[RMDB]
This 177-nucleotide RNA was probed chemically with 2A3 and DMS. Reactivities are given for positions 27 through 126.

RNA sequence: GGGAACGACUCGAGUAGAGUCGAAAACAACGAGCACGACGAGGCCCGGUUCGUGGCCGAGGAGAUCGAUGCGCUCGCCGAGGGUAGCGAGAUCACCUACAACGAUGUCGCCGUCUUCUACCGCACCAUCAGGUUCGAAGUUCGCUUCGAACCUGAUAAAAGAAACAACAACAACAAC
Reactivity to 2A3 in 0.01 (KOAc 150mM, MgCl2 10mM, bicine 150mM(pH8.5), 24C), signal-to-noise 2, nucleotides 027 to 126: c020a000a040c020g020a020g000c020a000c060g040a000c010g030a060g030g000c000c020c040g130g100u170u170c110g080u200g050g030c020c040g010a110g060g010a050g000a070u070c000g020a060u140g040c070g010c020u000c000g030c020c040g020a140g020g000g020u050a030g040c010g020a040g030a040u070c020a090c060c040u200a080c090a110a020c020g030a010u110g040u120c020g040c000c000g040u040c020u060u000c010u040a040c000c060g010c040a090c070c030
Reactivity to DMS in 0.01 (KOAc 150mM, MgCl2 10mM, bicine 150mM(pH8.5), 24C), signal-to-noise 1, nucleotides 027 to 126: c110a120a120c040g000a070g040c030a020c040g030a080c010g000a150g010g010c010c000c000g020g000u000u000c290g030u000g040g040c000c020g000a070g010g000a110g000a040u000c060g000a060u000g000c000g000c010u000c000g020c020c040g050a090g000g000g000u000a020g030c040g000a020g000a000u000c040a070c100c010u010a100c300a050a160c200g000a000u010g000u000c010g000c000c060g010u000c010u030u000c010u000a130c090c060g010c190a110c150c090
DMS adducts were read by reverse transcription with MarathonRT.